[RMDB]
RNA sequence: GGGAACGACUCGAGUAGAGUCGAAAACAGACCUCAGGCACCGAGCAUUAUAUCAGAGCAAGCUUGGCCAGAGUAGUGCCAGAGAAGUGGGCCGCAGUGGGGCGUAAAGCAAGAACGGUCCAAGGGUGAGUCGUCCUCCCUCGGCACGAGGACGUGAUCGAUACCUUAUCUUCGGAUAAGGUAUCGAAAAAGAAACAACAACAACAAC
Reactivity to DMS in 0.01 (KOAc 150mM, MgCl2 10mM, bicine 150mM(pH8.5), 24C), signal-to-noise 1, nucleotides 027 to 156: c040a140g050a120c030c030u010c050a090g050g040c050a090c030c020g000a150g060c060a210u000u000a160u030a160u000c120a230g000a280g000c060a040a220g000c070u000u020g020g030c070c010a140g000a160g050u020a040g020u000g060c000c020a130g000a160g050a070a020g000u000g000g010g010c000c010g000c030a120g050u000g020g020g030g020c100g010u010a090a130a290g010c070a060a100g020a120a050c090g000g000u000c020c020a020a150g010g000g000u000g000a100g080u000c030g030u000c030c000u050c000c020c050u000c110g000g000c050a090c120g020a050g010g010a020c020g010u010g000a080
Reactivity to 2A3 in 0.01 (KOAc 150mM, MgCl2 10mM, bicine 150mM(pH8.5), 24C), signal-to-noise 3, nucleotides 027 to 156: c040a020g120a120c000c010u030c060a050g010g030c010a000c060c020g020a040g000c010a050u140u210a120u170a060u300c110a070g040a050g160c090a160a010g030c030u020u040g030g000c030c060a040g010a010g080u150a010g000u020g000c010c010a010g040a000g030a210a020g060u040g010g010g000c000c020g020c030a030g070u130g010g020g020g000c040g000u140a160a120a010g030c050a060a020g020a140a010c020g060g000u000c030c010a000a030g030g000g020u060g010a040g080u060c000g010u000c010c000u040c020c010c000u050c030g020g000c030a000c060g000a000g000g000a000c020g030u040g000a070